[RMDB]
RNA sequence: GGGAACGACUCGAGUAGAGUCGAAAAUUUGUAGCUUGUUGAGUUGUCCCAUUAACUCAAUGCACAACCAGCGAAUGGUAUCUUGGGGACUGUUAAUGACACUGUUAAUCUUGGUGUAAGCAUUAAAGAGUGCUUUCUAUUUCGAUAGAAAGCACUCAAAAGAAACAACAACAACAAC
Reactivity to DMS in 0.01 (KOAc 150mM, MgCl2 10mM, bicine 150mM(pH8.5), 24C), signal-to-noise 2, nucleotides 027 to 126: u000u010u010g030u000a140g000c060u020u010g020u010u010g010a040g010u000u000g010u010c010c010c010a170u010u010a040a020c010u000c020a010a010u000g010c080a070c080a170a070c050c030a050g010c160g000a040a080u000g010g010u010a070u000c060u000u000g020g010g000g000a090c170u000g010u010u000a030a060u010g020a050c040a050c050u010g010u020u000a120a140u000c120u000u010g030g020u000g000u010a090a130g020c030a040u000u000a030a060a120
Reactivity to 2A3 in 0.01 (KOAc 150mM, MgCl2 10mM, bicine 150mM(pH8.5), 24C), signal-to-noise 1, nucleotides 027 to 126: u070u030u110g050u000a000g050c030u040u120g010u010u030g050a020g000u030u000g040u000c040c020c010a040u020u080a010a030c020u030c010a010a050u100g000c010a040c020a090a060c010c030a020g040c040g190a140a050u050g000g040u050a060u000c030u000u110g020g000g000g040a020c030u040g050u190u050a090a060u130g010a000c000a000c010u020g040u070u100a070a030u070c050u090u060g010g020u040g020u040a150a080g000c010a000u130u110a090a060a080